[RMDB]
Structure probing data (DMS and 2A3) for a 177-nucleotide construct.
The data come from the RNA Mapping Database (RMDB), library RFMREP.
For 2A3, 8,685 sequencing reads were counted.
For DMS, 5,078 sequencing reads were counted.
Reactivities are given for positions 27 through 126.
For 2A3 the reverse transcriptase was SuperScript II with manganese.
The RNA was probed in 150 mM KOAc, 10 mM MgCl2 and 150 mM bicine (pH 8.5) at 24 C.

RNA sequence: GGGAACGACUCGAGUAGAGUCGAAAAGUAACAACUCACCUGCCAAAUGGACUAGCCCUGAAAAUGGAUGACGCUAGCAGUGGAUAGUCGAUGCCCAAUCGUUAAAAGAAGUGAUAAUACUUUUAACCACAAUAUUGAAGUUCGCUUCAAUAUUGUGAAAAGAAACAACAACAACAAC
Reactivity to DMS in 0.01 (KOAc 150mM, MgCl2 10mM, bicine 150mM(pH8.5), 24C), signal-to-noise 5, nucleotides 027 to 126: g000u010a080a080c110a050a100c100u000c060a080c050c010u000g010c030c040a060a100a100u010g010g010a110c020u000a070g010c030c020c010u000g000a040a060a140a080u000g020g000a110u000g010a150c170g020c030u000a040g000c030a070g010u010g010g000a050u000a040g010u000c020g000a060u000g010c010c010c020a090a070u000c080g010u000u010a010a020a030a030g010a080a100g010u000g000a080u010a080a100u010a070c010u000u000u000u000a020a070c080
Reactivity to 2A3 in 0.01 (KOAc 150mM, MgCl2 10mM, bicine 150mM(pH8.5), 24C), signal-to-noise 5, nucleotides 027 to 126: g040u040a060a070c030a030a020c030u010c050a060c010c010u030g030c020c020a050a110a180u140g030g030a090c010u020a020g000c000c000c000u020g050a070a060a030a040u180g030g020a050u090g080a030c090g010c040u030a020g020c010a030g030u060g040g040a030u030a050g040u040c020g020a040u110g020c020c000c000a020a050u090c040g010u020u030a000a040a000a030g070a080a010g040u030g110a060u070a220a040u090a100c000u030u010u020u020a010a020c020